[RMDB]
RNA sequence: GGGAACGACUCGAGUAGAGUCGAAAAAGCCAAUCCUUCGGGAUUGGCUACAGCAACGAAGCAAUGCAACGAGACAAGACGAGCAAAAGAUCGAGCAUGCUACACACCCCAUCUUCGGAUGGGGUAAGCUAAAGACCAUGUUCGCAUGGUCUUUAGCAAAAGAAACAACAACAACAAC
Reactivity to 2A3 in 0.01 (KOAc 150mM, MgCl2 10mM, bicine 150mM(pH8.5), 24C), signal-to-noise 3, nucleotides 027 to 126: a000g000c000c000a000a010u000c010c000u030u040c210g030g000g000a000u010u010g030g000c000u000a000c020a000g030c030a070a050c050g150a060a020g020c030a040a120u050g020c010a120a160c050g020a010g050a070c040a110a030g100a070c090g070a050g170c050a040a060a070a050g050a060u020c010g010a020g020c030a000u030g000c030u090a030c070a000c010a010c040c000c000c000a000u000c000u050u050c160g070g010a000u000g000g000g010g000u000a000a000
Reactivity to DMS in 0.01 (KOAc 150mM, MgCl2 10mM, bicine 150mM(pH8.5), 24C), signal-to-noise 2, nucleotides 027 to 126: a020g000c000c000a000a020u000c000c000u000u010c180g030g060g020a040u000u000g000g010c030u000a010c010a050g020c100a060a100c060g010a110a070g010c020a140a050u000g000c030a050a050c080g000a050g000a170c090a080a060g020a090c120g000a140g000c050a040a050a040a080g000a080u000c040g000a110g020c000a040u000g000c040u000a090c150a070c190a040c030c000c000c000a010u000c000u000u000c120g010g000a010u000g000g000g000g000u000a010a020